[RMDB]
RNA sequence: GGGAACGACUCGAGUAGAGUCGAAAACUGAGACAUGUGGGGCUACAUUUCUUAGCGACUCAUCCAUUCUACUAGAUGCUCUGUGGUUUAGGAUUUUCUAUCCAUUGGUCUUAACCAAGAUGACGAAACACGUGUAUUGAUUCGUCAAUACACGUGUAAAAGAAACAACAACAACAAC
Reactivity to DMS in 0.01 (KOAc 150mM, MgCl2 10mM, bicine 150mM(pH8.5), 24C), signal-to-noise 8, nucleotides 027 to 126: c040u000g000a060g000a060c060a030u000g010u000g010g000g010g000c060u000a070c070a040u000u000u000c030u000u000a050g020c040g000a110c090u000c040a090u010c060c060a070u000u010c050u010a060c080u010a060g000a080u000g000c060u000c030u000g010u000g010g000u000u000u010a050g010g010a090u000u010u000u010c100u010a090u000c040c050a150u000u010g000g000u000c100u000u010a060a120c050c030a060a060g010a060u000g000a100c140g010a110a100
Reactivity to 2A3 in 0.01 (KOAc 150mM, MgCl2 10mM, bicine 150mM(pH8.5), 24C), signal-to-noise 4, nucleotides 027 to 126: c010u020g010a000g030a030c040a050u080g030u050g000g070g120g040c040u080a020c030a050u040u070u030c020u010u040a010g010c020g070a050c000u010c030a030u020c030c010a040u070u030c010u070a150c010u050a040g010a080u080g040c030u000c020u090g080u030g020g070u020u060u060a050g000g040a050u060u060u040u060c050u100a110u050c020c030a040u000u090g010g000u030c040u050u080a050a030c000c010a020a040g110a130u200g030a030c070g060a090a070